[RMDB]
RNA sequence: GGGAACGACUCGAGUAGAGUCGAAAAGAUAUGGAGUGCCGAAGAACUGCUCAAGAUGAGUCGGAAACGACCAUCGAAGACAAGCAGGGAGGCACUCCUAAGUCAAAGGACGGGUUCGCCCGUCCAACAACAAGAGCACGUUCGCGUGCUCUUGUUGAAAAGAAACAACAACAACAAC
Reactivity to DMS in 0.01 (KOAc 150mM, MgCl2 10mM, bicine 150mM(pH8.5), 24C), signal-to-noise 2, nucleotides 027 to 126: g000a030u000a300u000g000g000a010g040u000g030c000c000g000a140a200g000a190a150c030u000g000c010u000c060a050a100g000a000u000g000a080g030u000c000g010g000a080a090a130c000g000a030c000c010a000u020c000g000a090a070g000a160c300a070a010g010c000a030g000g010g000a040g020g000c020a000c000u010c000c010u010a020a060g000u000c030a090a150a100g010g010a010c000g020g000g040u000u000c270g000c000c000c000g010u010c000c010a010a050
Reactivity to 2A3 in 0.01 (KOAc 150mM, MgCl2 10mM, bicine 150mM(pH8.5), 24C), signal-to-noise 1, nucleotides 027 to 126: g030a010u040a060u180g000g000a010g000u010g000c000c010g140a290a060g010a090a010c000u000g000c020u060c080a020a050g000a020u080g050a030g090u000c020g030g000a050a030a020c010g000a000c000c000a000u000c000g020a170a010g120a070c090a060a060g050c020a020g040g030g050a070g010g010c000a000c010u010c000c020u010a000a000g000u000c030a130a090a080g000g000a000c010g000g010g050u050u200c210g060c050c000c000g000u000c010c010a000a020